Structure probing data (2A3) for a 177-nucleotide construct. Reactivities are given for positions 27 through 126. As a SHAPE reagent, 2A3 marks flexible, mostly unpaired nucleotides at the ribose 2'-OH. The reactions ran in a buffer of 150 mM KOAc, 10 mM MgCl2 and 150 mM bicine (pH 8.5), at 24 C. Source: RMDB library OK1LIB, as collected in RNAgym.
RNA sequence: GGGAACGACUCGAGUAGAGUCGAAAAGUUCCGCUACUACAAGGCUUAUCACUACGAGCAGGAACUCAAAUCGGCAACUAAUCAGAAGCGAAUCGUGGUGAUGCAAACAGCUACGAGAGCCCUCCUUGGACCCAUCAGUGUUCGCACUGAUGGGUCCAAAAGAAACAACAACAACAAC
Reactivity to 2A3 in 0.01 (KOAc 150mM, MgCl2 10mM, bicine 150mM(pH8.5), 24C), signal-to-noise 1, nucleotides 027 to 126: g000u010u010c000c000g000c110u120a040c000u000a020c070a120a020g040g000c030u020u050a060u110c090a010c040u020a030c030g000a000g100c280a220g000g040a090a020c000u000c180a020a120a020u150c000g060g000c000a180a000c000u070a000a070u100c040a010g110a140a090g040c000g030a000a000u040c010g020u000g000g000u120g020a030u050g000c000a090a260a000c060a160g000c000u020a000c000g000a130g000a050g150c000c000c010u070c010c000u040u000